The record gives the reactivity of an RNA of 177 nucleotides to 2A3 and DMS. High 2A3 reactivity points to a flexible backbone, as in loops and unpaired stretches. The data come from the RNA Mapping Database (RMDB), library TTRDEL. The DMS profile rests on 6,153 reads. The reactions ran in a buffer of 150 mM KOAc, 10 mM MgCl2 and 150 mM bicine (pH 8.5), at 24 C. For DMS the reverse transcriptase was MarathonRT.
RNA sequence: GGGAACGACUCGAGUAGAGUCGAAAAGAUAUGGAGAGCUACCCACCGAACUACAGCUGAGGGUCGGAAACGACCCGAGAUGAGCUGCGAGGCUCUCCUAAGUCAAAGCAUGGCUUCGGCCAUGCAACCUACAUGUACUCUUCGGAGUACAUGUAGGAAAAGAAACAACAACAACAAC
Reactivity to 2A3 in 0.01 (KOAc 150mM, MgCl2 10mM, bicine 150mM(pH8.5), 24C), signal-to-noise 4, nucleotides 027 to 126: g020a060u180a110u240g010g000a010g000a010g000c040u090a210c020c000c070a050c040c030g050a070a080c080u230a090c260a020g020c000u070g040a170g030g000g010u000c010g010g000a070a030a020c000g000a000c010c000c010g000a010g000a030u110g080a000g000c020u040g050c040g040a050g000g040c000u000c000u020c000c000u010a070a010g060u050c090a110a090a050g000c000a000u000g010g000c000u090u060c300g080g000c000c010a000u000g000c000a000a000
Reactivity to DMS in 0.01 (KOAc 150mM, MgCl2 10mM, bicine 150mM(pH8.5), 24C), signal-to-noise 5, nucleotides 027 to 126: g010a100u010a090u010g000g000a000g010a030g010c000u000a110c050c030c070a300c170c080g000a070a050c060u000a200c020a010g020c000u000g000a300g000g010g010u000c010g010g000a040a040a140c010g000a000c000c000c000g000a050g010a160u010g000a040g000c000u000g000c050g000a200g010g000c000u000c000u000c000c000u000a000a080g000u000c100a110a110a150g000c000a010u000g000g000c010u000u020c210g020g000c000c000a010u000g010c010a010a020